[RMDB]
This 177-nucleotide RNA was probed chemically with DMS and 2A3.
Conditions: 150 mM KOAc, 10 mM MgCl2 and 150 mM bicine (pH 8.5), 24 C.
The 2A3 profile rests on 38,874 reads.
For 2A3 the reverse transcriptase was SuperScript II with manganese.
RNA sequence: GGGAACGACUCGAGUAGAGUCGAAAAACAAGAGCCAAUGCGGUUUCAGUGGCUAAUACAAUUGCAAUGAGUCCACAUAAGGAUUUGCUGAUUCGUGGAGCUGUUGGCUCAGGAAAGUCUACUGGACGUAUACAUGAUCUUUCGAGAUCAUGUAUACAAAAGAAACAACAACAACAAC
Reactivity to DMS in 0.01 (KOAc 150mM, MgCl2 10mM, bicine 150mM(pH8.5), 24C), signal-to-noise 9, nucleotides 027 to 126: a120c070a110a130g000a020g010c010c010a020a030u000g020c040g020g010u000u000u000c010a030g020u000g010g010c040u000a060a070u020a100c300a080a080u000u000g010c030a140a080u010g010a080g010u000c000c010a090c230a130u010a130a120g000g000a030u000u000u000g010c030u010g000a040u000u000c040g020u010g010g010a090g010c030u010g020u000u000g000g000c010u000c010a110g010g000a080a060a080g000u000c040u000a110c100u000g000g010a240c200
Reactivity to 2A3 in 0.01 (KOAc 150mM, MgCl2 10mM, bicine 150mM(pH8.5), 24C), signal-to-noise 9, nucleotides 027 to 126: a000c050a050a060g000a000g010c000c010a010a020u080g020c030g050g020u000u020u010c010a010g010u050g110g000c020u050a020a020u200a140c110a060a140u130u080g020c020a030a180u180g020a040g030u000c010c010a050c050a180u200a170a120g010g000a020u040u030u150g010c020u030g020a050u020u050c110g110u290g090g070a080g020c030u030g070u040u020g010g000c000u000c000a000g010g050a080a070a010g030u040c040u110a140c080u150g050g020a030c080
The data come from the RNA Mapping Database (RMDB), library OK2TRN. For DMS, 31,861 sequencing reads were counted. For DMS the reverse transcriptase was MarathonRT.